[RMDB]
RNA sequence: GGGAACGACUCGAGUAGAGUCGAAAAGCAACGAGCGAAAUCGCGUCUUGACUAGGGAGACUGUAGGUGACGUGAGUAUCUAUCCCAGUGUGCAUAGCGCACAAUACGCUGAUCUACAGUCAAUUAAUGCUCUACCUAAAUUCGUUUAGGUAGAGCAAAAAGAAACAACAACAACAAC
Reactivity to DMS in 0.01 (KOAc 150mM, MgCl2 10mM, bicine 150mM(pH8.5), 24C), signal-to-noise 8, nucleotides 027 to 126: g020c070a080a060c070g000a070g010c010g010a070a080a110u000c030g000c020g010u000c010u000u010g010a170c100u010a100g010g010g020a190g010a030c000u000g010u000a000g000g010u000g010a040c030g030u000g010a070g020u000a050u000c170u010a110u000c030c020c020a180g000u000g010u000g000c000a170u000a110g010c160g000c010a010c010a070a060u000a030c010g010c020u000g000a050u000c010u000a010c010a020g000u000c010a070a070u000u020a060a120
Reactivity to 2A3 in 0.01 (KOAc 150mM, MgCl2 10mM, bicine 150mM(pH8.5), 24C), signal-to-noise 5, nucleotides 027 to 126: g070c020a010a070c080g100a000g020c020g040a010a020a200u090c020g010c000g060u010c020u120u220g110a130c050u080a100g050g120g040a170g010a010c010u010g000u010a000g030g050u030g020a010c020g000u020g010a030g010u050a050u060c070u050a110u070c010c010c010a020g030u040g010u000g040c050a180u160a260g050c030g010c040a000c010a010a010u080a030c030g000c030u040g020a020u000c000u020a010c000a000g010u000c010a000a050u140u120a130a060